[RMDB]
RNA sequence: GGGAACGACUCGAGUAGAGUCGAAAAGAUAUGGACCAGAAGAGCGAUAAGGAGACCUCGGAAACGAGGUUCUCCUUUUGACGCUCCUGGUCCUAAGUCAAAAGACCCCUACUUCGGUAGGGGUCAAUCAUUUGGAUGACUUCGGUCAUCCAAAUGAAAAAGAAACAACAACAACAAC
Reactivity to DMS in 0.01 (KOAc 150mM, MgCl2 10mM, bicine 150mM(pH8.5), 24C), signal-to-noise 1, nucleotides 027 to 126: g000a060u010a300u000g000g000a020c000c000a020g060a150a160g010a010g000c010g020a230u000a030a010g040g020a010g000a050c000c010u000c010g000g000a050a040a160c000g010a000g020g010u020u010c000u000c000c000u000u000u000u030g030a250c020g010c010u000c010c010u010g000g000u020c000c000u000a000a050g000u000c030a140a110a220a170g000a040c000c010c010c000u000a000c000u000u000c220g040g010u000a000g000g000g000g000u010c000a000a010
Chemical mapping of a 177-nucleotide RNA with DMS. Values cover nucleotides 27 to 126. Conditions: 150 mM KOAc, 10 mM MgCl2 and 150 mM bicine (pH 8.5), 24 C. Values are in units of 0.01, from 0 to 300, in steps of 10. Source: RMDB library TTRDES, as collected in RNAgym.